[RMDB]
RNA sequence: GGGAACGACUCGAGUAGAGUCGAAAAAUGGUAGUUAGUCUACUCGCUAUCCUAGUUACUUUGGAGUAAUCUAAAGUGUCUGUAAACGGGCGAAAGUCUGUAAAAUACUGGGGACAUAGGGUCAACAAGAACUAGUAGACCUUCGGGUCUACUAGAAACACAAGGUAUACUUCGGUAUACCUUGUGUAAAAGAAACAACAACAACAAC
Reactivity to DMS in 0.01 (KOAc 150mM, MgCl2 10mM, bicine 150mM(pH8.5), 24C), signal-to-noise 2, nucleotides 027 to 156: a100u000g040g000u000a020g030u010u000a120g020u000c010u000a010c030u000c140g010c070u010a100u000c030c020u010a060g010u000u000a010c020u000u000u000g020g000a040g000u010a130a160u000c020u000a000a020a040g020u000g000u010c060u000g000u000a040a160a050c030g000g020g000c010g010a160a090a220g010u000c020u020g010u010a020a050a040a110u020a050c040u000g040g010g010g010a060c030a150u000a050g020g000g020u010c080a070a070c070a100a100g000a050a220c000u000a000g030u010a010g000a020c010c010u000u010c300g090g000g000u000c000u000a000c020u000a010g000a060a090
Reactivity to 2A3 in 0.01 (KOAc 150mM, MgCl2 10mM, bicine 150mM(pH8.5), 24C), signal-to-noise 2, nucleotides 027 to 156: a020u070g010g000u020a040g020u150u060a060g030u040c040u040a040c010u030c040g030c060u050a040u140c000c010u010a020g040u050u060a030c030u040u010u050g030g010a030g020u130a140a130u000c010u030a010a000a020g000u000g030u030c010u020g130u070a050a170a100c030g000g010g000c000g020a070a020a010g020u000c020u030g040u070a010a050a040a060u130a050c030u030g020g010g000g000a020c010a050u090a040g070g000g000u060c010a010a020c010a130a060g050a080a040c000u000a000g000u000a000g020a000c000c000u020u040c170g060g020g000u020c000u010a000c010u000a000g000a000a020

An RNA of 207 nucleotides, treated with DMS and 2A3 and read out base by base.
The reactions ran in a buffer of 150 mM KOAc, 10 mM MgCl2 and 150 mM bicine (pH 8.5), at 24 C.
For DMS the reverse transcriptase was MarathonRT.
DMS (dimethyl sulfate) methylates the pairing face of unpaired adenines and cytosines.
It was measured as part of the RMDB library M2RFPK.
High 2A3 reactivity points to a flexible backbone, as in loops and unpaired stretches.